[RMDB]
RNA sequence: GGGAACGACUCGAGUAGAGUCGAAAAUCCUAAGUCGAGCAGUUUGAGGGUCAGGUUCGUUGAAAUCACUCGGAAACGAGUGAUGGAGAACCUGUGAAAGCCAAACUGAACUACUCGAUAUGGAAAAGCCUAGAGACAGUUCGCUGUCUCUAGGCAACCAUCAUGCUAGCUUCGGCUAGCAUGAUGGAAAAGAAACAACAACAACAAC
Reactivity to 2A3 in 0.01 (KOAc 150mM, MgCl2 10mM, bicine 150mM(pH8.5), 24C), signal-to-noise 2, nucleotides 027 to 156: u040c010c000u020a150a030g030u000c000g000a010g020c000a000g010u010u020u060g150a150g030g060g140u070c000a000g000g050u010u000c030g110u150u040g020a010a010a000u000c000a000c000u000c000g060g040a060a050a050c000g000a000g000u000g000a010u000g000g000a060g000a000a010c000c030u000g010u030g020a150a000a000g120c010c000a000a030a030c010u010g020a050a040c040u100a110c000u150c000g000a010u010a090u140g040g010a030a150a090a080g000c000c010u000a000g000a000g000a000c010a010g000u130u220c260g070c170u000g010u000c000u040c000u000a000g000g000c020a000a000